[RMDB]
RNA sequence: GGGAACGACUCGAGUAGAGUCGAAAAUCUGGAACGGUGACAGAGUGUUUAUCGAUAAGUGGUGCAACCCAAGCUGUGCCAGAGUCAAGAUGGGAGUCAUCAGAGCAAAAUGCGUCUGUGGGGAGUGGCGAUCUUGCAGAUUCGUCUGCAAGAUCGCAAAAGAAACAACAACAACAAC
Reactivity to DMS in 0.01 (KOAc 150mM, MgCl2 10mM, bicine 150mM(pH8.5), 24C), signal-to-noise 1, nucleotides 027 to 126: u020c000u010g010g020a070a040c040g000g050u000g010a100c160a030g000a100g060u000g010u000u000u000a090u000c040g080a060u020a080a100g040u010g030g000u010g020c050a030a110c020c020c040a080a160g000c030u000g020u000g000c050c030a030g000a090g000u000c130a040a040g000a030u000g000g010g010a100g000u010c030a060u000c020a050g020a170g030c120a010a040a100a140u010g000c060g010u010c010u010g010u010g010g010g020g000a060g010u010g000

Chemical mapping of a 177-nucleotide RNA with DMS. It was measured as part of the RMDB library OK2TRN.